[RMDB]
RNA sequence: GGGAACGACUCGAGUAGAGUCGAAAAUGGAAGUAGUCGGCGUUACGGCGCAGCGCGUACUCGCUGACGCCGAGCACACGCGCGGCCGUGUCGAGCGGCACCAUGACCGGCAGCGGGGCCAGCACGCUACUCAAAGCAGCUUCGGCUGCUUUGAGUAAAAAGAAACAACAACAACAAC
Reactivity to DMS in 0.01 (KOAc 150mM, MgCl2 10mM, bicine 150mM(pH8.5), 24C), signal-to-noise 2, nucleotides 027 to 126: u020g010g030a160a100g050u010a140g000u010c020g000g000c020g000u000u000a050c010g020g020c000g000c020a050g010c000g020c090g010u000a140c090u000c010g020c020u000g040a110c190g040c300c000g000a020g000c140a040c160a070c000g010c000g030c000g010g020c000c000g000u000g000u000c050g000a080g010c010g010g000c030a080c070c080a040u000g000a080c030c000g000g010c070a090g000c040g000g000g010g020c050c030a060g010c050a070c110g000c050

Source: RMDB library OK2TRN, as collected in RNAgym.
An RNA of 177 nucleotides, treated with DMS and read out base by base.
The DMS profile rests on 1,628 reads.
For DMS the reverse transcriptase was MarathonRT.